The record gives the reactivity of an RNA of 177 nucleotides to DMS and 2A3. The DMS profile rests on 1,744 reads. The RNA was probed in 150 mM KOAc, 10 mM MgCl2 and 150 mM bicine (pH 8.5) at 24 C. For 2A3 the reverse transcriptase was SuperScript II with manganese. Values are in units of 0.01, from 0 to 300, in steps of 10.
[RMDB]
RNA sequence: GGGAACGACUCGAGUAGAGUCGAAAAUUCAGCGCAUUCGUGCGCUGAAAAGCUGUACAACGCAUGUACAGAAAACAAAACAAAAACAAAACAAAAAGCGUAGCAGGGUUCUUUUCGAAGAACCCAAGUAAACUGCAUUAUUCGUAAUGCAGUUUACAAAAGAAACAACAACAACAAC
Reactivity to DMS in 0.01 (KOAc 150mM, MgCl2 10mM, bicine 150mM(pH8.5), 24C), signal-to-noise 2, nucleotides 027 to 126: u000u000c000a010g010c000g000c000a020u010u000c220g010u000g020c010g020c000u000g000a000a000a060a170g000c030u000g010u000a000c020a000a070c080g000c060a080u000g000u010a020c000a000g000a080a060a080a060c080a040a050a140a070c120a020a090a060a090a070c080a120a040a080a050c080a090a080a060a090a140g020c050g010u000a150g050c290a040g000g020g020u000u000c000u000u000u010u010c170g000a030a030g010a030a000c000c000c000a000a020
Reactivity to 2A3 in 0.01 (KOAc 150mM, MgCl2 10mM, bicine 150mM(pH8.5), 24C), signal-to-noise 3, nucleotides 027 to 126: u030u000c000a010g000c000g010c000a010u030u070c200g080u030g010c000g000c010u010g000a000a000a000a000g000c000u000g000u020a010c000a070a030c050g000c100a110u040g000u000a000c000a000g010a060a080a000a010c060a010a080a010a010c070a040a110a030a030a020c060a040a110a020a010c050a020a190a040a050a030g050c040g070u080a040g070c130a100g010g020g000u000u000c000u030u050u040u090c130g020a000a000g000a000a000c000c000c000a000a000